[RMDB]
RNA sequence: GGGAACGACUCGAGUAGAGUCGAAAAACCGGAGGCCGACAAUCCAGGUAACCGGAUGUCAUCACGUUGUUGCAGUACCAGAUGGCAUCUUAAAUCCGAUCUGCAAAUAAGCAUGUAGAAAGCUGAUAAAAUCACACACACUUCGGUGUGUGUGAAACUACCUCUUGAUCUUCGGAUCAAGAGGUAGAAAAGAAACAACAACAACAAC
Reactivity to DMS in 0.01 (KOAc 150mM, MgCl2 10mM, bicine 150mM(pH8.5), 24C), signal-to-noise 1, nucleotides 027 to 156: a110c030c000g030g020a120g000g000c040c010g030a030c070a060a120u020c070c000a090g040g010u000a050a120c070c030g000g000a100u000g010u000c000a030u020c070a300c160g000u020u000g020u020u050g000c000a080g060u000a160c030c070a180g020a050u000g010g000c010a010u000c020u000u000a030a030a180u000c020c020g000a130u010c030u000g020c050a070a060a090u000a080a100g040c030a140u000g030u000a140g000a070a070a200g030c030u000g020a110u000a040a030a140a080u000c000a000c000a000c010a030c000a010c020u010u000c280g050g020u000g040u010g020u020g000u000g010a010a000a130
Reactivity to 2A3 in 0.01 (KOAc 150mM, MgCl2 10mM, bicine 150mM(pH8.5), 24C), signal-to-noise 2, nucleotides 027 to 156: a040c000c000g000g060a030g050g030c080c080g050a100c080a050a060u040c050c040a040g000g050u060a030a050c040c010g000g000a010u000g010u020c020a010u000c030a030c150g050u050u040g110u020u030g010c060a060g010u120a080c100c080a060g010a010u020g000g010c000a000u030c000u000u100a050a040a010u000c020c020g070a090u010c000u020g000c000a050a050a000u090a130a000g070c050a060u130g040u060a030g130a120a060a020g000c050u040g050a010u140a060a090a020a030u020c000a040c000a000c000a010c000a000c010u020u130c290g030g000u010g000u000g010u000g000u000g000a000a000a000